[RMDB]
RNA sequence: GGGAACGACUCGAGUAGAGUCGAAAAAGUAUCGGGUUCGCCCGAUACUGUUGGCGCGCGGCCUUUGUCCUGUCGCGCGUAUAUUGCGCGCGAUAUUCGCGCAUGUGGGGUCGUUCGCGACCCCAAAUAACGAUAAUCACUUCGGUGAUUAUCGUUAAAAAGAAACAACAACAACAAC
Reactivity to 2A3 in 0.01 (KOAc 150mM, MgCl2 10mM, bicine 150mM(pH8.5), 24C), signal-to-noise 2, nucleotides 027 to 126: a020g000u000a000u010c000g010g000g040u040u060c190g070c010c000c000g000a000u000a000c000u010g030u020u130g100g010c030g000c000g020c010g010g010c010c040u100u130u120g060u020c000c030u020g020u010c010g000c000g000c000g000u000a010u010a030u010u170g020c010g010c010g000c010g040a030u030a180u200u080c010g000c010g060c030a020u070g090u100g080g000g010g000u020c020g010u020u050c130g020c020g060a020c000c000c000c000a000a000a000
Reactivity to DMS in 0.01 (KOAc 150mM, MgCl2 10mM, bicine 150mM(pH8.5), 24C), signal-to-noise 3, nucleotides 027 to 126: a020g000u000a000u000c000g010g010g010u000u010c240g010c000c010c000g010a010u000a000c000u000g000u000u000g010g010c070g010c010g030c010g000g000c010c120u000u010u010g000u000c090c070u000g010u000c000g010c000g030c000g020u000a010u010a070u000u010g030c020g010c000g010c160g010a090u000a090u000u000c010g020c010g020c010a040u010g010u000g020g010g010g020u000c010g020u000u020c170g030c000g000a030c000c010c000c000a000a010a070
This 177-nucleotide RNA was probed chemically with 2A3 and DMS. It was measured as part of the RMDB library M2PK50. For 2A3 the reverse transcriptase was SuperScript II with manganese.